[RMDB]
RNA sequence: GGGAACGACUCGAGUAGAGUCGAAAAGUGACAUUGGUUCUUAUGACUUUCCAACUAUUGCUGCAUGGACACUAGGAGAAACUAUAGUCGGAAGCAUUUUUUCUGAUGAAUCUUCUCAAAGUACGGAUACGACGAUUGUAUUCGUACAAUCGUCGUAAAAAGAAACAACAACAACAAC
Reactivity to DMS in 0.01 (KOAc 150mM, MgCl2 10mM, bicine 150mM(pH8.5), 24C), signal-to-noise 3, nucleotides 027 to 126: g010u020g000a260c040a070u010u000g030g010u030u010c040u020u010a020u000g000a080c050u020u040u010c000c030a040a040c080u010a020u000u000g000c030u000g000c030a050u010g020g000a080c120a050c060u000a150g030g010a080g000a090a030a140c080u000a030u000a080g010u000c030g000g010a000a060g000c140a010u000u040u020u020u020u000c000u020g000a010u010g010a040a160u010c050u000u010c010u000c000a060a100a080g000u020a050c050g000g020a090
Reactivity to 2A3 in 0.01 (KOAc 150mM, MgCl2 10mM, bicine 150mM(pH8.5), 24C), signal-to-noise 3, nucleotides 027 to 126: g030u020g020a020c030a040u030u060g030g020u030u000c000u030u060a100u060g260a300c010u050u060u060c020c000a040a020c020u030a040u040u090g030c040u030g020c040a110u120g050g070a040c050a010c090u030a030g080g080a100g210a050a070a020c030u020a020u030a070g030u010c010g000g000a000a000g000c000a060u050u030u020u020u010u000c010u010g000a000u010g030a030a080u000c020u050u000c020u000c020a090a070a000g040u080a020c060g020g010a000
Description:
This 177-nucleotide RNA was probed chemically with DMS and 2A3. The DMS profile rests on 5,146 reads. Values cover nucleotides 27 to 126. Values are in units of 0.01, from 0 to 300, in steps of 10.